RNA sequence: GGGAACGACUCGAGUAGAGUCGAAAAACGUGCAACGCCGAGGGAAUCUUGCCACAAGCAGAGAGUGACCCGAUUGAUGCUUCGUUGUGAUCGUCGGCGUGUAGGAGCGUUGUGAUCGCAGUGCGUGGGCCUACCCACCUUUCGAGGUGGGUAGGCCAAAAGAAACAACAACAACAAC
Reactivity to 2A3 in 0.01 (KOAc 150mM, MgCl2 10mM, bicine 150mM(pH8.5), 24C), signal-to-noise 1, nucleotides 027 to 126: a000c060g040u070g020c110a120a050c060g010c030c060g170a130g040g110g000a000a190u070c000u160u130g000c000c000a090c010a010a010g000c000a000g170a000g040a000g110u070g040a050c010c070c120g040a050u060u140g090a000u030g040c030u010u100c020g040u140u080g000u040g000a000u000c000g080u040c000g080g000c000g010u000g000u010a050g000g150a110g000c000g010u060u000g100u090g080a040u060c110g000c000a030g000u000g030c030g020u120g000